[RMDB]
RNA sequence: GGGAACGACUCGAGUAGAGUCGAAAAAACAAUAUGACCCGCUACUAAUAAGUGAUAAUCAGCUGGUAAUGCGUUCAUGAAAUUAGAUAAUUCUCUAAAUUGUUUAGCUGAAAUUAAACCAUUUUGAAGCUCUAAUAAACUUCGGUUUAUUAGAGCUAAAAGAAACAACAACAACAAC
Reactivity to 2A3 in 0.01 (KOAc 150mM, MgCl2 10mM, bicine 150mM(pH8.5), 24C), signal-to-noise 2, nucleotides 027 to 126: a010a000c200a090a110u240a120u150g030a080c000c040c000g040c070u090a020c000u000a140a060u000a070a000g040u050g060a010u040a300a060u090c020a040g040c000u060g130g220u210a060a070u080g000c000g050u000u010c010a010u010g160a260a300a020u020u000a000g020a040u060a080a130u270u050c050u050c000u000a050a070a050u020u020g010u050u020u010a000g000c030u140g140a000a000a010u040u030a040a010a000c000c000a000u160u240u000u100g070a010
Reactivity to DMS in 0.01 (KOAc 150mM, MgCl2 10mM, bicine 150mM(pH8.5), 24C), signal-to-noise 2, nucleotides 027 to 126: a030a040c080a050a090u000a120u000g010a190c090c020c030g030c210u010a130c020u020a050a050u010a040a250g020u000g000a100u000a070a130u000c040a130g010c020u000g020g010u010a050a050u000g020c070g000u020u000c010a040u000g000a110a050a040u000u000a020g000a080u020a060a090u000u020c060u000c020u000a010a030a100u010u010g000u000u000u000a070g020c070u010g010a060a050a080u000u000a010a080a070c080c070a070u000u000u000u000g000a180

Description:
The record gives the reactivity of an RNA of 177 nucleotides to 2A3 and DMS. The data come from the RNA Mapping Database (RMDB), library OK2TST.